[RMDB]
RNA sequence: GGGAACGACUCGAGUAGAGUCGAAAAGAGACAGGGUUCGCCCUGUCUCAAAGAACGCGAAGAAAACCGAAAUAAAACGGUUUGGUACGCGACCAACAACAAAAACUAAGACCUUCGGGUCUUAGAAGUACAUCAGAUGGUUCGCCAUCUGAUGUACAAAAGAAACAACAACAACAAC
Reactivity to 2A3 in 0.01 (KOAc 150mM, MgCl2 10mM, bicine 150mM(pH8.5), 24C), signal-to-noise 2, nucleotides 027 to 126: g000a000g000a010c010a000g050g000g050u060u060c080g070c010c000c000u010g010u000c010u010c010a000a000a000g010a070a020c000g020c010g040a100a040g090a180a170a000a000c020c010g050a060a160a120u300a030a110a030a010c010g010g010u000u000u000g030g010u080a010c010g000c010g030a020c020c020a000a040c000a020a010c000a010a120a020a000a010c010u020a010a000g000a000c010c000u050u160c300g060g020g000u010c000u000u000a000g000a000a010
Reactivity to DMS in 0.01 (KOAc 150mM, MgCl2 10mM, bicine 150mM(pH8.5), 24C), signal-to-noise 1, nucleotides 027 to 126: g030a010g000a000c010a060g030g020g010u000u020c290g000c000c000c000u000g010u020c000u030c000a020a100a100g000a130a120c050g010c010g000a100a170g000a090a000a000a010c000c020g020a050a120a100u010a000a130a070a060c000g040g000u000u000u000g000g010u000a080c000g000c000g000a160c020c050a040a060c170a000a020c030a080a070a070a030a210c020u000a000a000g000a050c030c000u000u000c100g010g000g010u000c000u010u000a000g000a030a110

Structure probing data (2A3 and DMS) for a 177-nucleotide construct. Conditions: 150 mM KOAc, 10 mM MgCl2 and 150 mM bicine (pH 8.5), 24 C.